[RMDB]
RNA sequence: GGGAACGACUCGAGUAGAGUCGAAAAAUUGACGGCGUAGUAUACACUAUUGAAUCAAACAGCCGACCAAUUGCACUACCAUCACAAUGGAGAAGCCAGUAGUUAACGUAGACGUAGACCCGCAGAGAGAUGACCCUGUAUUCGUACAGGGUCAUCUAAAAGAAACAACAACAACAAC
Reactivity to 2A3 in 0.01 (KOAc 150mM, MgCl2 10mM, bicine 150mM(pH8.5), 24C), signal-to-noise 3, nucleotides 027 to 126: a040u000u030g060a030c020g030g010c030g040u020a030g060u010a170u080a140c060a030c070u060a040u150u170g090a140a100u130c060a130a010a070c000a050g000c000c030g000a060c110c000a000a060u040u080g010c020a050c050u150a080c000c050a000u080c030a020c030a070a090u060g070g000a060g080a120a020g060c000c000a040g060u110a010g010u050u010a030a020c050g040u030a020g020a090c030g030u000a010g010a130c020c050c060g060c080a010g060a020g000
Reactivity to DMS in 0.01 (KOAc 150mM, MgCl2 10mM, bicine 150mM(pH8.5), 24C), signal-to-noise 3, nucleotides 027 to 126: a040u000u010g010a130c050g000g010c040g060u000a100g000u040a090u010a110c210a090c080u000a090u030u020g010a200a100u020c090a080a060a080c190a190g020c000c010g000a140c070c040a010a080u020u000g000c110a120c090u000a090c030c030a080u020c120a070c140a010a090u000g000g050a070g010a090a050g000c030c030a030g000u000a040g000u000u030a010a030c040g000u000a070g020a030c080g040u000a040g020a090c020c010c020g080c120a050g010a160g000